Structure probing data (2A3) for a 207-nucleotide construct. Conditions: 150 mM KOAc, 10 mM MgCl2 and 150 mM bicine (pH 8.5), 24 C. For 2A3, 789 sequencing reads were counted. It was measured as part of the RMDB library M2RFPK. 2A3 adducts were read by reverse transcription with SuperScript II with manganese. Values are in units of 0.01, from 0 to 300, in steps of 10.
[RMDB]
RNA sequence: GGGAACGACUCGAGUAGAGUCGAAAACGGCAUUAUACCACCGUUAUCGGGUCAACAGAGUAGUUGCAAAUGACAACAAUGCUCAGGGUUAUGCUCUCGCUGCCUAAUGGCGGUGCGGGAAACCCACAAAAGAUAUUGAUCUUCGGAUCAAUAUCAAGCCUACCUUAGCGUUCGCGCUAAGGUAGGCAAAAGAAACAACAACAACAAC
Reactivity to 2A3 in 0.01 (KOAc 150mM, MgCl2 10mM, bicine 150mM(pH8.5), 24C), signal-to-noise 2, nucleotides 027 to 156: c000g030g000c020a000u050u020a020u300a200c020c030a010c010c010g120u070u000a150u120c040g010g000g080u010c020a000a050c010a090g000a020g060u080a010g000u010u010g040c060a080a200a290u190g060a080c010a030a000c000a030a230u130g050c000u070c040a090g040g040g000u050u000a110u230g050c010u000c000u030c010g000c000u000g000c000c000u160a300a010u060g020g000c010g030g010u010g000c020g000g020g000a050a020a000c010c000c010a040c010a000a100a000a000g000a000u030a000u000u000g000a000u000c000u020u030c160g090g000a000u000c000a000a000u000a000u000c000a000a000